[RMDB]
RNA sequence: GGGAACGACUCGAGUAGAGUCGAAAAAGAUGUCGAAAGCACUGACAACGUUUGCAGCCGAGGGUAAGGAUGCGCCAAAGGCGUUGAAUGAGACGAUCACCUCGAUUGAACAGCUGGUCAAAGCUGGUAAUUCUCAAGGUGCUAUCAAUCUUGCCGAGCUCAAAGAGUUCUUCGGAACUCUUUGAGCAAAAGAAACAACAACAACAAC
Reactivity to 2A3 in 0.01 (KOAc 150mM, MgCl2 10mM, bicine 150mM(pH8.5), 24C), signal-to-noise 1, nucleotides 027 to 156: a000g050a000u140g030u300c130g070a190a040a000g010c000a000c060u030g030a020c090a100a000c100g010u020u040u150g000c030a020g030c010c000g020a020g020g040g030u080a120a000g020g020a070u090g000c080g030c020c030a100a060a070g020g000c020g000u010u020g090a140a190u090g000a020g120a050c040g000a090u050c010a070c100c020u030c020g000a030u010u060g010a130a030c000a030g000c030u070g060g190u260c120a150a000a000g030c000u010g000g000u060a040a170u130u130c080u010c060a020a040g000g000u000g020c000u000a000u090c000a040a050u000c030u030u110g040c020c090g010a080
Chemical mapping of a 207-nucleotide RNA with 2A3. It was measured as part of the RMDB library OK3TST. The reactions ran in a buffer of 150 mM KOAc, 10 mM MgCl2 and 150 mM bicine (pH 8.5), at 24 C.